[RMDB]
RNA sequence: GGGAACGACUCGAGUAGAGUCGAAAACCCUCGAUCCACCUUCGAGGGGGUUCACACCCCCAACCGGCGGGCCGGCUACUCUUCUUUCCCUUCUCUCGUCUUCCUCGGUCAACCUCUUAAGUUCCUCUUCUUCCUCCCUGCUGAGGCUCUUCCCUCCGUAACUAGGAAUGUUCGCAUUCCUAGUUACAAAAGAAACAACAACAACAAC
Reactivity to DMS in 0.01 (KOAc 150mM, MgCl2 10mM, bicine 150mM(pH8.5), 24C), signal-to-noise 1, nucleotides 027 to 156: c000c010c010u000c030g030a110u000c040c120a070c060c060u000u000c000g020a280g030g030g000g010g010u000u000c230a150c180a300c050c000c030c010c010a130a060c090c060g060g020c060g020g020g020c030c020g050g040c040u010a040c050u010c030u010u000c000u020u010u000c020c020c000u000u000c030u000c020u000c030g020u000c040u010u000c020c000u000c010g030g000u000c040a100a120c020c020u000c040u000u000a070a230g000u010u000c010c020u020c040u000u000c010u000u000c020c030u000c000c010c060u000g070c040u000g010a170g020g030c000u020c070u000u000c020c000c000u000c060c130
Reactivity to 2A3 in 0.01 (KOAc 150mM, MgCl2 10mM, bicine 150mM(pH8.5), 24C), signal-to-noise 3, nucleotides 027 to 156: c010c010c000u020c030g030a050u030c030c080a030c060c040u070u070c050g050a090g000g020g010g000g000u230u230c060a060c020a020c040c000c000c020c000a020a040c030c020g010g000c030g020g050g000c020c000g020g040c020u090a050c020u050c000u120u030c030u050u060u080c020c010c000u080u060c050u020c010u010c020g070u030c050u100u040c010c020u020c030g000g050u020c050a080a050c020c010u040c010u090u110a080a060g030u060u050c000c000u020c010u080u030c030u060u050c040c010u030c020c000c010u010g010c030u040g010a020g000g020c000u010c000u050u030c010c000c000u040c030c020

The record gives the reactivity of an RNA of 207 nucleotides to DMS and 2A3. The reactions ran in a buffer of 150 mM KOAc, 10 mM MgCl2 and 150 mM bicine (pH 8.5), at 24 C. For DMS the reverse transcriptase was MarathonRT.